The record gives the reactivity of an RNA of 207 nucleotides to DMS and 2A3. The reactions ran in a buffer of 150 mM KOAc, 10 mM MgCl2 and 150 mM bicine (pH 8.5), at 24 C. The DMS profile rests on 5,786 reads. The 2A3 profile rests on 4,232 reads. It was measured as part of the RMDB library OK3TST.

[RMDB]
RNA sequence: GGGAACGACUCGAGUAGAGUCGAAAAAUAUACGUAUAAUGCCGGUAAGUCACCAAAAGACGGCAAACAUGAUCACAUCGGCGUUCAUGAGCAAACGGACGGCACCUACUACGUCGGUCUCUCGGUGCCAAUUGGGCGGCUCACUGCUGGUGAGACCGAAGUGUUGUAUUUUCGAAUACAACACUUCAAAAGAAACAACAACAACAAC
Reactivity to DMS in 0.01 (KOAc 150mM, MgCl2 10mM, bicine 150mM(pH8.5), 24C), signal-to-noise 3, nucleotides 027 to 156: a110u010a130u000a040c070g030u000a100u000a090a120u000g010c010c030g020g000u010a070a080g010u000c040a300c040c030a070a080a080a180g020a100c030g000g020c020a110a050a180c100a070u000g010a070u000c050a090c050a140u000c050g030g020c010g020u010u010c150a080u000g010a070g000c060a020a050a100c030g010g020a110c050g000g030c020a040c020c010u000a060c040u010a050c040g010u020c030g010g010u000c030u000c020u000c100g020g030u000g040c030c000a070a100u030u010g020g010g020c070g000g020c020u000c000a050c070u000g010c060u010g020g050u000g000a050g010a060c050c040
Reactivity to 2A3 in 0.01 (KOAc 150mM, MgCl2 10mM, bicine 150mM(pH8.5), 24C), signal-to-noise 5, nucleotides 027 to 156: a000u160a010u040a060c060g060u110a090u070a200a110u080g000c010c000g040g010u060a080a070g080u130c100a080c130c070a160a020a020a040g130a030c050g020g000c010a030a060a000c060a040u140g040a080u090c040a010c020a140u080c040g070g000c040g040u100u090c070a060u090g040a020g050c020a050a050a030c040g070g050a010c020g020g010c000a010c010c000u070a070c020u040a050c070g110u100c040g010g040u020c010u000c010u010c060g000g000u010g010c000c000a010a020u060u040g050g020g030c040g030g010c010u010c020a020c030u110g020c030u070g010g030u010g010a020g020a020c030c070